[RMDB]
RNA sequence: GGGAACGACUCGAGUAGAGUCGAAAAAUACAUUCAGUUUGAAACCAUCGGCUGCCACGGACUUGAUGUUAAAUCCUGCCGUGGGCGUUACCUGCGGGAUUUCACUCCGUAUUUUAUGGGGAAAACGCACCAGCCAUAUAUUCGUAUAUGGCUGGUGAAAAGAAACAACAACAACAAC
Reactivity to DMS in 0.01 (KOAc 150mM, MgCl2 10mM, bicine 150mM(pH8.5), 24C), signal-to-noise 3, nucleotides 027 to 126: a040u000a020c070a060u020u030c110a150g010u010u000u010g010a090a110a140c070c080a070u040c120g020g010c080u000g010c000c020a020c020g010g000a110c010u000u000g010a020u000g000u060u050a040a080a050u000c000c020u000g010c010c030g010u010g000g000g010c060g010u020u010a100c070c050u000g020c110g010g000g000a090u010u030u020c070a110c070u010c020c020g010u000a020u020u000u020u010a040u030g020g000g000g000a080a040a080a060c150g040
Reactivity to 2A3 in 0.01 (KOAc 150mM, MgCl2 10mM, bicine 150mM(pH8.5), 24C), signal-to-noise 5, nucleotides 027 to 126: a010u130a010c050a020u030u150c040a040g070u020u110u200g070a070a030a020c020c000a060u080c080g030g000c010u050g000c000c020a020c010g010g070a120c020u040u060g010a020u020g090u110u150a040a160a020u020c010c010u020g040c000c000g010u050g030g000g010c010g010u040u080a070c000c000u020g030c050g020g020g030a090u050u070u080c030a030c020u030c020c010g020u010a120u000u140u020u080a090u110g020g000g000g010a070a000a000a000c070g010